[RMDB]
RNA sequence: GGGAACGACUCGAGUAGAGUCGAAAAAUUUCAGUUUUAGAUUGAGGUCAGGGGCUGUUAAAAGAUAUAAGAAAUUUUAUAAUGGGUCAUAUGCAUUUAGUUCGUGGCCCAGUUUAUGACCACAUAACUAUGGUAAUCAAUUCGUUGAUUACCAUAGAAAAGAAACAACAACAACAAC
Reactivity to DMS in 0.01 (KOAc 150mM, MgCl2 10mM, bicine 150mM(pH8.5), 24C), signal-to-noise 4, nucleotides 027 to 126: a080u000u010u010c020a080g010u010u020u000u010a050g000a140u020u010g010a080g000g010u010c020a030g010g000g000g000c030u000g000u020u030a030a050a080a100g000a100u010a090u010a100a200g000a110a080a040u020u020u000u000a060u020a060a100u010g000g000g020u000c010a010u010a100u020g010c050a110u030u040u030a060g030u000u010c100g030u000g000g000c000c000c000a000g000u010u010u020a040u000g010a100c000c020a070c090a030u020a080a140
Reactivity to 2A3 in 0.01 (KOAc 150mM, MgCl2 10mM, bicine 150mM(pH8.5), 24C), signal-to-noise 3, nucleotides 027 to 126: a000u120u130u040c000a020g020u070u010u000u130a200g040a220u030u120g040a020g010g000u010c010a020g000g010g000g040c000u010g030u110u020a000a140a000a070g050a010u160a030u050a230a010g080a070a130a040u110u200u050u070a180u070a090a160u050g010g000g040u000c020a000u050a060u210g050c030a020u000u210u080a030g060u030u100c090g030u000g000g000c000c000c010a000g010u000u040u050a040u050g010a010c000c000a060c000a060u120a040a000
This 177-nucleotide RNA was probed chemically with DMS and 2A3. The data come from the RNA Mapping Database (RMDB), libraries RFM100 and RFMREP. The RNA was probed in 150 mM KOAc, 10 mM MgCl2 and 150 mM bicine (pH 8.5) at 24 C.